[RMDB]
RNA sequence: GGGAACGACUCGAGUAGAGUCGAAAAUAACUAUUUAGGAACGCGCUACAAAGACACAUCUAACGACUUAGUACGCCAAAGGGAGAAGACCCCUAACUAUCUUCUCCUUGGGACUCCGGUGUCUUAAAUCAUCCGGUAGUCCUGCCUCUGUGAGUCGGGGACUAUGCUAAUUCGUUAGCAUAGUCCCAAAAGAAACAACAACAACAAC
Reactivity to 2A3 in 0.01 (KOAc 150mM, MgCl2 10mM, bicine 150mM(pH8.5), 24C), signal-to-noise 1, nucleotides 027 to 156: u120a010a050c090u090a080u240u160u110a060g000g080a110a040c030g090c050g010c080u060a010c180a090a000a070g090a060c000a020c050a140u100c080u120a130a070c020g030a000c010u010u010a000g010u180a030c100g050c060c220a110a070a130g000g010g000a010g060a000a000g020a010c030c060c000c190u070a090a070c090u070a120u070c000u000u000c000u000c000c000u010u050g000g000g000a000c000u000c000c000g000g000u010g000u050c050u170u250a250a240a070u010c030a030u060c030c000g010g000u020a000g010u080c000c000u000g000c030c000u000c000u020g000u010g010a000g000u000c000g000